[RMDB]
The data come from the RNA Mapping Database (RMDB), libraries RFM100 and RFMREP. Chemical mapping of a 177-nucleotide RNA with DMS.
RNA sequence: GGGAACGACUCGAGUAGAGUCGAAAAACCCCAAAGGAUCACCAUUAAAUUUGGCACAGAUCUCUAGAAAAGUCAAAUCUUACACCCAUGUGAUAAUUUUUCUAGAGAUCUGUGCCAAAUUUAAUAGAAUCAACGUGUAAUUCGUUACACGUUGAUUAAAAGAAACAACAACAACAAC
Reactivity to DMS in 0.01 (KOAc 150mM, MgCl2 10mM, bicine 150mM(pH8.5), 24C), signal-to-noise 3, nucleotides 027 to 126: a090c100c000c000c220a070a090a140g000g000a100u000c080a090c160c050a020u010u000a000a000a010u000u010u000g010g000c000a010c000a010g010a010u000c000u000c010u010a010g000a010a000a010a030g010u010c110a070a130a060u020c030u030u010a080c050a130c150c230c120a100u030g010u000g000a060u000a060a020u000u000u000u000u000c000u010a000g010a020g000a020u000c000u000g020u000g000c000c000a000a010a000u000u000u000a000a000u000a060g000
The RNA was probed in 150 mM KOAc, 10 mM MgCl2 and 150 mM bicine (pH 8.5) at 24 C.